[RMDB]
RNA sequence: GGGAACGACUCGAGUAGAGUCGAAAAGAUAUGGAGUGGCACCAGCAUUAGUAAGCUUUUGACGAAGUCUAUUCGGAAACGAAUAGCCUUCGAUAAGCUUACUAAUGCUGGUGUGCACUCCUAAGUCCUACUUACGGUUCUUCGGAACCGUAAGUAGAAAAGAAACAACAACAACAAC
Reactivity to DMS in 0.01 (KOAc 150mM, MgCl2 10mM, bicine 150mM(pH8.5), 24C), signal-to-noise 2, nucleotides 027 to 126: g000a100u000a250u020g010g010a020g060u000g010g000c000a020c000c000a000g000c000a020u000u000a010g020u000a010a000g000c000u000u000u010u020g020a280c230g010a010a010g000u000c000u000a000u010u000c000g000g010a130a090a200c000g000a010a010u000a000g010c060c000u000u000c010g010a090u010a010a000g010c000u000u000a000c000u000a000a010u020g010c000u000g000g010u000g020u000g010c000a000c000u000c000c010u000a000a110g010u010c040